[RMDB]
RNA sequence: GGGAACGACUCGAGUAGAGUCGAAAAGAAAGAAAGAAAGGCCUCACUUUUCCACUUAUGCCUGCCCUGCCCCUCGAAUCUGCUCCACGAUUUGGGCAGGACAGGCAGAAGUGGAUAAGUGAGGAAACUCGAUAUCUUCGUUCGCGAAGAUAUCGAGAAAAGAAACAACAACAACAAC
Reactivity to DMS in 0.01 (KOAc 150mM, MgCl2 10mM, bicine 150mM(pH8.5), 24C), signal-to-noise 2, nucleotides 027 to 126: g000a120a100a050g010a080a060a050g000a090a170a090g030g000c000c000u000c000a000c030u000u000u000u000c000c000a010c000u040u000a070u000g000c000c000u000g000c020c020c000u000g000c000c010c010c300u030c070g000a030a030u020c020u000g060c040u020c090c070a160c130g010a040u000u000u000g020g000g000c000a000g010g000a020c000a000g010g000c000a000g000a010a000g020u010g000g000a000u000a000a000g040u000g000a000g000g000a000a020a030